[RMDB]
RNA sequence: GGGAACGACUCGAGUAGAGUCGAAAAGGGGUCUAUCUUGUCAGUGAGCUCCGGAUCUUGGAUUUAUACACUGAAGCCUCCACGGUGUAUUGUCAGAUCCGGGCUCACUUGGAUUUAGAUAGACGGAGGCACCCAAACCAGUGCUUCGGCACUGGAAUCUUGUAUUGUUGUUCGCAACAAUACAAGAAAAAGAAACAACAACAACAAC
Reactivity to DMS in 0.01 (KOAc 150mM, MgCl2 10mM, bicine 150mM(pH8.5), 24C), signal-to-noise 1, nucleotides 027 to 156: g030g040g050g000u010c010u000a000u000c000u010u000g030u010c010a110g000u010g000a040g000c000u020c020c010g000g010a000u000c000u020u000g030g010a070u000u000u000a010u030a030c000a010c000u000g000a080a150g020c010c030u000c010c040a300c050g020g000u000g010u000a010u000u000g000u010c010a070g000a020u000c000c020g070g000g020c020u000c000a010c010u000u000g010g020a060u000u010u000a030g030a060u010a010g010a060c020g010g020a070g030g040c010a150c020c000c000a080a080a230c010c010a030g010u000g000c020u000u010c300g030g020c000a020c020u000g000g010a020a050
Reactivity to 2A3 in 0.01 (KOAc 150mM, MgCl2 10mM, bicine 150mM(pH8.5), 24C), signal-to-noise 2, nucleotides 027 to 156: g040g000g020g030u000c000u000a000u000c010u020u040g030u030c030a040g010u020g020a010g010c070u130c300c000g000g000a020u000c030u080u270g140g000a060u220u300u100a000u030a000c010a000c010u070g100a250a130g130c000c100u060c050c020a020c020g000g020u000g000u010a000u000u030g020u020c020a010g000a010u010c000c000g000g010g010c000u000c000a000c000u000u060g000g000a000u120u080u090a010g000a000u000a000g000a000c000g000g010a030g040g000c050a040c000c020c000a080a040a070c000c000a000g000u000g000c000u100u140c270g100g000c010a000c000u000g000g030a000a040